Chemical mapping of a 177-nucleotide RNA with DMS and 2A3. The 2A3 profile rests on 1,433 reads.
[RMDB]
RNA sequence: GGGAACGACUCGAGUAGAGUCGAAAAGAAAGAAAGAAAACCGUGUGGAAAAGAAUGGCUAUAACCACUGAAACCUGAGGAAACAGGAAGCCACAACGGAAGCCAUGUGGUUAGCACACGGAAGAAAGAUAUUUACGUGCUUCGGCACGUAAAUAUCAAAAGAAACAACAACAACAAC
Reactivity to DMS in 0.01 (KOAc 150mM, MgCl2 10mM, bicine 150mM(pH8.5), 24C), signal-to-noise 3, nucleotides 027 to 126: g020a150a080a130g010a110a070a090g000a200a130a230a100c000c030g030u000g000u000g000g000a070a050a010a060g000a020a000u000g010g010c000u000a070u020a110a080c040c030a230c130u000g000a140a130a100c010c000u000g010a210g000g010a080a170a150c030a020g010g040a060a110g000c190c110a080c180a100a060c130g000g010a100a000g000c000c000a000u000g010u020g000g000u010u000a010g000c000a000c000a000c000g010g010a000a020g000a040a080a100
Reactivity to 2A3 in 0.01 (KOAc 150mM, MgCl2 10mM, bicine 150mM(pH8.5), 24C), signal-to-noise 3, nucleotides 027 to 126: g040a000a050a000g100a040a060a010g110a000a180a010a020c000c020g030u000g000u000g110g300a010a020a020a020g040a070a040u030g000g000c020u050a010u140a290a100c030c020a020c010u040g000a070a010a020c000c010u080g000a080g070g300a080a100a090c000a000g000g000a020a020g040c030c020a050c080a070a040c060g030g100a070a000g040c000c000a040u030g000u020g050g220u060u010a000g000c000a000c000a000c060g000g000a000a020g000a000a000a000
The data come from the RNA Mapping Database (RMDB), library OK1LIB. For DMS the reverse transcriptase was MarathonRT.